RNA sequence: GGGAACGACUCGAGUAGAGUCGAAAAGAUAUGGACUGUCACCUCUCACAUUCUAAAGGGAGCAAACGUUCGGAAACGAACGCUUGCGAAGAACUUUAGAGAUGUGAGAGGUGACAGUCCUAAGUCACAAUGUACAAUACUUCGGUAUUGUACAUUGAAAAGAAACAACAACAACAAC
Reactivity to DMS in 0.01 (KOAc 150mM, MgCl2 10mM, bicine 150mM(pH8.5), 24C), signal-to-noise 4, nucleotides 027 to 126: g010a050u000a300u000g010g010a020c000u000g010u000c000a010c000c000u000c000u000c000a020c000a020u010u000c000u000a000a010a010g000g010g010a120g000c000a000a000a010c000g010u000u000c000g010g000a130a150a290c000g000a010a010c000g020c020u000u010g000c000g010a090a150g000a100a200c010u000u000u000a000g000a030g010a020u000g010u000g010a010g000a010g000g010u000g000a000c010a000g010u010c000c000u000a000a040g010u000c040a280
This 177-nucleotide RNA was probed chemically with DMS. It was measured as part of the RMDB library TTRINS. The RNA was probed in 150 mM KOAc, 10 mM MgCl2 and 150 mM bicine (pH 8.5) at 24 C. DMS (dimethyl sulfate) methylates the pairing face of unpaired adenines and cytosines. For DMS, 6,864 sequencing reads were counted.